This 170-nucleotide RNA was probed chemically with DMS and 2A3. Source: RMDB library 15KLIB, as collected in RNAgym. 2A3 adducts were read by reverse transcription with SuperScript II with manganese. Values cover nucleotides 27 to 129.
RNA sequence: GGGAACGACUCGAGUAGAGUCGAAAAAUCGGCAAAUGGGCCCCUCGCUCGUAUCUCCGAGAGGAGACGAGAAGGAGGCGGAUCUCCCUUUGCCAUCCGAGGGGACUGCGUCCUCCUUACGGAUGCCAACCUAUUCGGUUCGCCGAAUAGAAAAGAAACAACAACAACAAC
Reactivity to DMS in 0.01 (KOAc 150mM, MgCl2 10mM, bicine 150mM(pH8.5), 24C), signal-to-noise 3, nucleotides 027 to 129: a040u040c090g020g020c040a010a010a010u060g000g000g000c010c010c000c020u010c020g030c000u000c010g030u060a070u030c020u010c000c000g000a220g010a200g000g000a000g000a020c010g000a020g000a030a050g040g010a010g000g000c150g050g000a070u030c110u050c000c000c050u000u000u000g020c000c000a000u020c020c020g020a120g000g000g000g000a050c050u060g020c180g010u030c010c010u030c030c030u030u040a070c020g020g000a020u020g020c000c070a110a090c080
Reactivity to 2A3 in 0.01 (KOAc 150mM, MgCl2 10mM, bicine 150mM(pH8.5), 24C), signal-to-noise 9, nucleotides 027 to 129: a000u080c050g010g010c030a010a040a120u180g010g000g000c000c000c000c000u000c000g030c000u000c000g070u100a180u050c000u000c000c010g040a050g010a060g080g000a000g000a000c000g010a000g010a030a090g210g010a000g000g030c170g020g000a040u050c120u110c040c000c000u000u000u000g000c000c000a000u000c000c000g010a030g010g020g000g000a010c040u220g080c220g050u020c000c010u120c020c010u090u100a060c020g000g000a000u030g030c010c000a030a060c030